An RNA of 177 nucleotides, treated with DMS and read out base by base. Source: RMDB library OK2TST, as collected in RNAgym. The RNA was probed in 150 mM KOAc, 10 mM MgCl2 and 150 mM bicine (pH 8.5) at 24 C.
RNA sequence: GGGAACGACUCGAGUAGAGUCGAAAAGCGAGCGACGCCGGCCAUACGAGGUGUGGAUGGUUACCCACAAGGACCUGCGCCACACCGCGCGGGUCCGCGCGGUGAUCGAGCGGUUGGUGGAGGCGUAAGCGGAUGCACGUUUCGACGUGCAUCCGCUAAAAGAAACAACAACAACAAC
Reactivity to DMS in 0.01 (KOAc 150mM, MgCl2 10mM, bicine 150mM(pH8.5), 24C), signal-to-noise 1, nucleotides 027 to 126: g000c010g030a110g010c120g010a100c080g020c040c010g010g000c020c000a060u000a090c090g020a120g000g000u000g030u020g010g000a080u000g010g000u000u000a080c110c040c010a080c170a120a170g000g000a050c010c030u000g000c080g020c030c070a300c280a090c170c160g000c000g000c000g020g010g000u000c040c000g000c120g030c190g000g010u000g010a010u000c070g010a300g010c010g000g050u000u000g000g000u000g000g050a250g000g000c050g060u000a080